RNA sequence: GGGAACGACUCGAGUAGAGUCGAAAAUGUCGUGAGAUGUUGGGUUAAGUCCCGCAACGAGCGCAACCCUCGUCCUUAGUUGCUAACAGUUCGGCUGAGCACUCUAAGGAGACUGCCUUCGUAAGGAGCCUGGUUCUACCUUCGGGUAGAACCAGGCAAAAGAAACAACAACAACAAC
Reactivity to 2A3 in 0.01 (KOAc 150mM, MgCl2 10mM, bicine 150mM(pH8.5), 24C), signal-to-noise 1, nucleotides 027 to 126: u050g020u030c000g070u060g000a010g000a000u050g000u300u300g070g020g020u000u130a000a150g300u130c000c000c000g000c000a000a000c000g000a000g000c000g000c020a020a000c000c000c000u010c090g230u070c000c000u000u000a000g000u000u000g000c000u020a100a000c000a020g000u000u000c000g200g000c000u000g080a000g000c000a030c030u000c000u000a000a050g080g000a000g000a000c090u100g000c000c000u060u050c080g100u050a000a000g010g000a000